This 177-nucleotide RNA was probed chemically with DMS and 2A3. For DMS the reverse transcriptase was MarathonRT. Conditions: 150 mM KOAc, 10 mM MgCl2 and 150 mM bicine (pH 8.5), 24 C. Source: RMDB library M2PK50, as collected in RNAgym.
RNA sequence: GGGAACGACUCGAGUAGAGUCGAAAACGUCUAGCGUUCGCGCUAGACGAAAGUAGCAACAUGUCAAUUCUCGCAGACAUGAAAGCUACAAAUGCGAGAAAAAAACUAGGAGCUUCGGCUCCUAGAACUGUCCCAAAUAGUUCGCUAUUUGGGACAGAAAAGAAACAACAACAACAAC
Reactivity to DMS in 0.01 (KOAc 150mM, MgCl2 10mM, bicine 150mM(pH8.5), 24C), signal-to-noise 1, nucleotides 027 to 126: c010g000u000c000u010a010g020c000g040u000u020c240g020c020g010c000u000a000g010a050c000g000a000a000a070g000u000a000g020c000a150a300c040a010u000g000u000c010a100a180u000u000c030u020c060g000c030a300g000a020c000a000u000g000a030a080a200g000c000u040a050c100a060a010a070u000g000c000g030a000g040a010a000a100a200a070a080a190c000u020a000g010g000a050g020c000u000u000c200g020g030c000u000c000c000u000a050g030a010a060
Reactivity to 2A3 in 0.01 (KOAc 150mM, MgCl2 10mM, bicine 150mM(pH8.5), 24C), signal-to-noise 1, nucleotides 027 to 126: c020g000u010c000u000a000g010c000g060u040u020c200g020c000g000c050u010a010g000a000c000g000a000a000a000g050u050a010g060c010a010a070c000a010u010g000u010c010a040a220u050u030c020u010c030g000c040a000g000a020c000a010u000g060a080a040a000g000c000u050a030c050a040a100a020u120g010c020g000a020g020a110a040a010a000a000a000a030c000u000a000g000g000a000g020c000u080u110c230g100g010c000u000c000c000u000a000g000a010a000